[RMDB]
RNA sequence: GGGAACGACUCGAGUAGAGUCGAAAAACAAUGAAGCUAAAUUAUGUGCUAUGUAAAACUAUGCUCUAUGUACUAUGAACUUGGGAUCCUAUUGGGUAAUACAAAUUAUGGCCACCUACUAGCUUUUAUGAAGUUUUCACUUGCACUCAUGUUAACAACCAUUAACCUGAUUCGUCAGGUUAAUGGUAAAAGAAACAACAACAACAAC
Reactivity to 2A3 in 0.01 (KOAc 150mM, MgCl2 10mM, bicine 150mM(pH8.5), 24C), signal-to-noise 6, nucleotides 027 to 156: a000c060a020a090u120g050a050a020g010c020u100a110a070a100u250u120a160u180g050u030g010c020u050a020u140g040u120a040a030a040a060c030u030a050u140g010c020u020c010u040a050u110g060u050a030c010u050a050u150g070a080a030c040u050u050g020g000g040a030u040c030c000u050a080u070u100g020g000g000u060a070a020u100a130c050a040a090a070u130u050a040u110g030g000c010c020a010c010c010u040a060c030u010a030g010c000u000u070u050u070a100u100g060a060a020g020u010u020u030u050c040a030c030u030u060g030c050a010c020u050c020a050u070g020u040u050a100a030c040a030
Reactivity to DMS in 0.01 (KOAc 150mM, MgCl2 10mM, bicine 150mM(pH8.5), 24C), signal-to-noise 3, nucleotides 027 to 156: a040c060a110a110u000g020a060a100g020c040u010a070a150a100u010u010a060u000g000u000g010c020u000a080u000g030u010a060a050a080a050c080u010a050u000g020c020u000c060u010a100u010g040u010a080c070u010a090u000g020a030a050c080u000u000g010g000g020a110u000c060c000u000a100u010u000g030g040g000u000a030a100u010a110c030a060a040a090u000u010a050u000g000g010c000c020a050c030c030u000a030c030u000a050g010c010u000u000u000u000a080u020g010a050a120g010u000u010u010u000c050a050c050u000u000g010c030a080c080u010c040a100u000g020u000u020a060a090c090a080